[RMDB]
RNA sequence: GGGAACGACUCGAGUAGAGUCGAAAACGCCUAAUCUUCGGAUUAGGCGAAAAGAGGACGUGGAGGAGGCUUCAAACGAAACGACGAUCACUCCCGAACAGAAAAGACUGGAGUUCGCUCCAGUCAACUCCUCACUAUAGUUCGCUAUAGUGAGGAGAAAAGAAACAACAACAACAAC
Reactivity to DMS in 0.01 (KOAc 150mM, MgCl2 10mM, bicine 150mM(pH8.5), 24C), signal-to-noise 3, nucleotides 027 to 126: c020g020c000c000u000a010a020u000c000u000u020c210g020g000a020u000u000a000g030g040c010g000a010a010a060a160g020a090g000g010a110c100g030u000g010g010a180g000g000a130g010g000c070u000u010c060a060a100a130c140g010a100a050a070c080g000a120c050g010a120u010c060a090c080u000c010c010c020g000a140a080c190a100g000a100a060a100a090g000a020c000u000g000g010a030g010u000u010c170g000c010u000c000c000a000g000u010c000a020a050
Reactivity to 2A3 in 0.01 (KOAc 150mM, MgCl2 10mM, bicine 150mM(pH8.5), 24C), signal-to-noise 3, nucleotides 027 to 126: c000g000c000c020u010a000a000u000c000u050u070c210g050g010a000u000u000a010g000g000c000g000a010a000a000a000g080a030g060g050a020c070g030u090g030g030a040g020g010a030g080g000c020u040u040c060a140a150a050c040g120a070a020a030c090g100a020c040g030a080u050c040a020c090u010c000c000c000g010a060a020c050a080g180a070a130a060a050g010a000c000u000g000g010a000g010u040u100c180g040c100u000c000c000a010g000u000c000a000a000
Conditions: 150 mM KOAc, 10 mM MgCl2 and 150 mM bicine (pH 8.5), 24 C. Structure probing data (DMS and 2A3) for a 177-nucleotide construct. The 2A3 profile rests on 3,276 reads. The DMS profile rests on 2,375 reads. Values cover nucleotides 27 to 126.